Overview: Source: RMDB library M2PK90, as collected in RNAgym. An RNA of 177 nucleotides, treated with 2A3 and DMS and read out base by base. Reactivities are given for positions 27 through 126. The reactions ran in a buffer of 150 mM KOAc, 10 mM MgCl2 and 150 mM bicine (pH 8.5), at 24 C.

[RMDB]
RNA sequence: GGGAACGACUCGAGUAGAGUCGAAAAUUUAAGAGCGUAGAUGUCUCUGUCACGAUACGAGUAAGUGACUCUCGUGUACUACUGACGAAAGAGACAGAGACAUUUAUGCUCAGUGUCAGUCAAGGAAGAAGGAAUUUGAUUUCGAUCAAAUUCCUUCAAAAGAAACAACAACAACAAC
Reactivity to 2A3 in 0.01 (KOAc 150mM, MgCl2 10mM, bicine 150mM(pH8.5), 24C), signal-to-noise 3, nucleotides 027 to 126: u120u130u090a160a030g000a000g000c000g010u000a010g000a010u000g000u000c010u010c000u010g020u010c020a010c050g040a020u060a110c010g010a010g020u060a140a170g080u100g260a090c000u020c010u010c080g100u090g030u060a070c040u010a020c020u070g140a060c040g020a120a090a050g070a000g010a000c000a000g000a000g000a000c000a000u000u000u000a000u000g010c000u010c000a000g000u010g010u020c020a000g040u080c040a060a090g110g020a050a140
Reactivity to DMS in 0.01 (KOAc 150mM, MgCl2 10mM, bicine 150mM(pH8.5), 24C), signal-to-noise 4, nucleotides 027 to 126: u010u010u010a120a150g000a010g010c000g020u010a010g000a020u000g000u000c000u000c000u000g020u000c000a100c080g000a220u000a070c010g000a050g010u010a040a050g010u010g010a100c090u010c190u010c120g000u000g010u000a060c060u000a050c090u000g010a150c100g020a060a110a180g010a100g010a010c000a000g010a010g000a000c000a000u000u010u000a010u000g000c000u000c000a020g010u000g000u010c100a070g020u000c100a070a090g010g020a100a100